About this RNA
This 177-nucleotide RNA was probed chemically with 2A3 and DMS. DMS adducts were read by reverse transcription with MarathonRT. The RNA was probed in 150 mM KOAc, 10 mM MgCl2 and 150 mM bicine (pH 8.5) at 24 C. Values cover nucleotides 27 to 126.
RNA sequence: GGGAACGACUCGAGUAGAGUCGAAAAAGUAUGGUACGCCAUACAAUGCAUGAGUUCAUCUUGGUCUAGGAUUGUUGGAGGAGUCAGAAAAAUUACCCCAGGGAUCCUGAAGUCAUUGGGGUGGAAAAUCCUUAAGAGCUUUCGAGCUCUUAAGGAUAAAAGAAACAACAACAACAAC
Reactivity to 2A3 in 0.01 (KOAc 150mM, MgCl2 10mM, bicine 150mM(pH8.5), 24C), signal-to-noise 2, nucleotides 027 to 126: a000g000u020a000u000g000g010u090a050c270g080c030c000a020u010a070c000a090a050u050g040c070a090u140g030a010g140u110u130c050a090u060c160u020u070g050g010u040c090u090a000g110g030a200u030u020g150u070u030g050g040a090g060g010a080g070u080c050a000g160a030a090a000a000a000u090u060a000c000c000c000c000a000g060g010g000a040u030c000c100u110g120a070a030g000u000c000a000u030u000g000g000g000g010u150g040g000a060a050a000
Reactivity to DMS in 0.01 (KOAc 150mM, MgCl2 10mM, bicine 150mM(pH8.5), 24C), signal-to-noise 3, nucleotides 027 to 126: a110g020u020a010u000g000g000u010a090c270g020c010c010a030u020a030c010a080a100u020g020c100a070u010g010a080g010u000u010c090a040u000c030u010u010g010g010u000c030u000a100g000g020a050u030u020g020u000u000g010g000a170g020g010a160g000u030c060a070g010a040a040a060a060a090u010u010a040c040c000c020c030a020g000g000g000a020u000c030c100u030g020a090a140g000u010c020a030u010u000g030g010g000g020u000g000g000a030a050a070